[RMDB]
RNA sequence: GGGAACGACUCGAGUAGAGUCGAAAACGUAGCGUACGUGUUCAGUAAGACUGCCUCAAGGAUAGUCUACGCAUCUGAUGCGGGUACCGAUACAGCAGGAUUUGAUCGACGAGUUCUGCAUGUGAAUGCUACGGAUAUCGAUGAAACUGAUCCGGUCGGUAACUGAUAGCUUCGGCUAUCAGUUACCAAAAGAAACAACAACAACAAC
Reactivity to 2A3 in 0.01 (KOAc 150mM, MgCl2 10mM, bicine 150mM(pH8.5), 24C), signal-to-noise 2, nucleotides 027 to 156: c000g000u000a000g030c000g030u060a020c030g100u120g140u130u110c050a020g010u180a060a000g000a000c000u000g030c000c010u250c160a250a160g020g040a300u090a030g000u000c020u060a020c270g080c030a130u120c080u080g020a010u070g000c070g030g060g000u060a100c020c020g030a020u060a290c000a000g000c000a000g000g030a000u000u010u080g180a140u190c050g120a080c030g040a000g000u000u000c020u020g020c060a300u020g000u000g070a160a020u250g010c000u010a000c000g000g010a150u220a020u090c030g020a020u010g060a050a020a020c010u010g060a050u000c040c010g020g000u150c080